The record gives the reactivity of an RNA of 207 nucleotides to 2A3.
2A3 adducts were read by reverse transcription with SuperScript II with manganese.
Conditions: 150 mM KOAc, 10 mM MgCl2 and 150 mM bicine (pH 8.5), 24 C.
Source: RMDB library RNAMAK, as collected in RNAgym.
Reactivities are given for positions 27 through 156.

[RMDB]
RNA sequence: GGGAACGACUCGAGUAGAGUCGAAAACGCUUUGUUCGCAAAGCGAAAAAAUCCUAAGUCAUAACGAAGAACACACAUGAGCUAUGAAGUGUCGGAAACGACAUGGAGCUCAGUGUGGGAGUUAUGAUAUGGAAAAAAAUGGCCGUUCGCGGCCAAAACAAUCCCUUCUCUUCGGAGAAGGGAUUGUAAAAGAAACAACAACAACAAC
Reactivity to 2A3 in 0.01 (KOAc 150mM, MgCl2 10mM, bicine 150mM(pH8.5), 24C), signal-to-noise 2, nucleotides 027 to 156: c010g000c000u000u000u020g060u030u150c090g040c200a000a020a000g010c020g080a110a000a000a000a000a020u060c040c010u080a140a040g020u000c000a000u000a000a020c030g110a300a130g020a120a000c000a020c000a000c020a300u040g000a000g000c000u020a150u300g020a060a040g000u000g000u000c000g030g060a090a030a020c000g010a010c000a000u000g020g020a000g000c000u000c000a000g030u010g000u000g000g000g000a040g000u000u000a000u000g000a000u000a010u000g030g020a130a010a040a000a040a000a110u030g000g000c010c000g010u020u050c180g010c050g010g000c020c050a050a030a000